[RMDB]
RNA sequence: GGGAACGACUCGAGUAGAGUCGAAAAUGUGCAUCGGUAUACAAGUUUGAAAGCGUUAGGAUGUAAGAAAGUUCCAGUGCAAGAAAUCCAUGAAACACAAUAUUCAAUUAGUACAUGGCAACAUAAACCGCAUAAGUGGUUUCGACCACUUAUGCGGAAAAGAAACAACAACAACAAC
Reactivity to 2A3 in 0.01 (KOAc 150mM, MgCl2 10mM, bicine 150mM(pH8.5), 24C), signal-to-noise 1, nucleotides 027 to 126: u000g010u000g050c000a000u040c000g000g050u000a070u070a180c070a100a140g050u050u120u040g300a210a090a000g000c000g000u000u000a070g060g040a000u000g020u200a000a000g050a160a110a110g070u020u000c000c000a010g000u000g010c030a210a000g200a070a180a000u000c000c000a000u000g000a000a070a000c160a000c090a210a160u300a160u210u000c180a300a300u300u000a040g040u040a040c000a090u000g000g000c000a070a050c000a000u230a000a000a000
Reactivity to DMS in 0.01 (KOAc 150mM, MgCl2 10mM, bicine 150mM(pH8.5), 24C), signal-to-noise 1, nucleotides 027 to 126: u000g000u020g000c090a060u000c020g000g080u030a090u020a120c000a080a170g000u000u000u020g000a050a060a090g000c220g000u020u010a100g000g020a080u000g030u020a050a060g000a110a120a070g000u020u000c000c000a070g000u020g000c040a040a030g000a030a080a220u020c000c000a060u000g010a140a010a030c100a010c080a040a120u010a070u060u000c110a020a000u000u020a040g080u020a140c020a000u000g000g020c270a030a000c140a030u000a080a050a100
Description:
An RNA of 177 nucleotides, treated with 2A3 and DMS and read out base by base. For DMS the reverse transcriptase was MarathonRT. 2A3 adducts were read by reverse transcription with SuperScript II with manganese. Conditions: 150 mM KOAc, 10 mM MgCl2 and 150 mM bicine (pH 8.5), 24 C. Reactivities are given for positions 27 through 126. It was measured as part of the RMDB library OK1LIB.